Structure probing data (2A3) for a 207-nucleotide construct. The data come from the RNA Mapping Database (RMDB), library OK3TST.
RNA sequence: GGGAACGACUCGAGUAGAGUCGAAAAACACAAUAAAUAUUGCUGCCUAAUAAAACAGAGCUGAGAGAGGGUGUAUUAUGAUUGCAUAUUUAUGGGUUGCUGUGUUCAUUGAUGAUCUUUUAGUAAAUAAUUUGUUGAAAAGAAGCUUUCAGUUUAACACAGUAAGCAACUUCGGUUGCUUACUGUGAAAAGAAACAACAACAACAAC
Reactivity to 2A3 in 0.01 (KOAc 150mM, MgCl2 10mM, bicine 150mM(pH8.5), 24C), signal-to-noise 1, nucleotides 027 to 156: a010c080a030c020a010a110u080a040a090a000u210a140u030u190g020c000u030g000c000c000u060a140a030u030a030a160a030a040c050a050g060a000g000c040u080g030a020g000a000g000a000g010g000g000u050g050u020a050u090u040a050u050g110a030u000u210g010c000a000u040a040u100u220u170a150u170g040g020g000u090u050g000c010u000g010u030g010u040u020c000a020u060u070g020a000u050g000a070u160c010u020u170u090u000a050g060u050a070a120a120u090a140a000u100u000u040g000u000u010g040a100a060a100a120g040a090a010g000c010u000u000u160c050a120g000u230u140u070a070a070